[RMDB]
RNA sequence: GGGAACGACUCGAGUAGAGUCGAAAAAAAAAGAUAUGGACCGAACUACACUGUAAGCGGAGCCGACGAUCAAUUAUCGGAAACGAUAAUUGGGAGGCUCCGUUGAGGUGCGGUCCUAAGUCAAAAACCUUAAAUACUGGUUCGCCAGUAUUUAAGGAAAAGAAACAACAACAACAAC
Reactivity to 2A3 in 0.01 (KOAc 150mM, MgCl2 10mM, bicine 150mM(pH8.5), 24C), signal-to-noise 1, nucleotides 027 to 126: a000a020a010a010a000g020a000u050a050u050g000g000a000c010c020g010a040a020c060u260a050c240a010c000u150g150u300a000a000g030c010g000g010a010g010c020c010g170a300c010g000a080u030c020a000a010u000u000a010u000c020g010g020a050a050a000c010g000a010u000a000a000u010u000g010g010g000a000g000g000c000u020c000c000g000u000u000g000a020g000g030u000g020c000g040g000u000c010c000u000a000a010g000u010c020a000a000a070a120a190
Reactivity to DMS in 0.01 (KOAc 150mM, MgCl2 10mM, bicine 150mM(pH8.5), 24C), signal-to-noise 3, nucleotides 027 to 126: a030a020a060a100a080g000a040u010a300u000g010g030a000c010c010g000a080a020c050u040a300c010a010c030u000g010u010a300a170g010c000g000g000a020g010c000c000g020a110c260g000a060u000c000a000a010u000u000a000u000c010g000g000a070a040a090c000g010a000u000a000a010u000u000g000g010g010a050g020g020c000u000c000c000g000u000u000g000a120g000g010u000g010c000g010g010u000c000c000u010a030a060g010u010c010a060a120a080a060a100